Source information
Chemical mapping of a 207-nucleotide RNA with 2A3 and DMS. 2A3 adducts were read by reverse transcription with SuperScript II with manganese. High DMS reactivity at an A or C suggests that its Watson-Crick edge is free. Conditions: 150 mM KOAc, 10 mM MgCl2 and 150 mM bicine (pH 8.5), 24 C. For DMS, 2,362 sequencing reads were counted.
RNA sequence: GGGAACGACUCGAGUAGAGUCGAAAAAAAACAUGGCGGCGAUGAUGAGUGUAUAGGCGUAACAGGUGAUGCCUCUAGGUGGGAUCACAACUUGGGACCCUCUCACACGUAUGUAGAAAAAGAGUGCGUUAAAAAAUUCUUUGAGCCGAGUAUGCACGGAGUGCUUAUUAUUCGUAAUAAGCACUCCAAAAGAAACAACAACAACAAC
Reactivity to 2A3 in 0.01 (KOAc 150mM, MgCl2 10mM, bicine 150mM(pH8.5), 24C), signal-to-noise 2, nucleotides 027 to 156: a020a000a000a060c050a020u050g060g000c060g010g000c030g110a130u140g010a010u020g020a100g000u070g010u050a060u100a080g010g000c090g020u020a070a020c030a020g000g060u010g010a000u100g110c130c000u030c020u080a200g160g000u100g060g070g010a000u040c000a010c010a090a150c060u060u080g050g000g010a010c030c000c000u000c000u030c000a000c000a000c030g020u040a040u190g060u060a050g140a140a160a080a000a000g090a010g040u020g020c080g030u040u040a060a120a030a000a020a220u140u120c030u060u040u090g050a000g010c000c050g030a010g070u070a080u070g050c090a000c180
Reactivity to DMS in 0.01 (KOAc 150mM, MgCl2 10mM, bicine 150mM(pH8.5), 24C), signal-to-noise 1, nucleotides 027 to 156: a050a030a000a050c020a040u000g010g010c010g000g040c000g010a090u010g000a080u000g000a070g030u010g050u000a140u010a040g000g000c010g020u010a150a070c080a080g030g020u000g010a090u000g020c000c010u000c090u010a070g020g020u010g020g020g010a040u000c010a030c060a080a040c100u030u000g010g020g010a090c050c010c000u000c030u000c010a030c050a020c030g020u000a030u010g020u000a110g000a120a110a070a030a100g010a070g000u010g010c060g020u000u010a000a010a080a090a030a080u010u010c020u010u000u010g000a120g000c010c000g010a150g030u000a040u000g010c060a100c150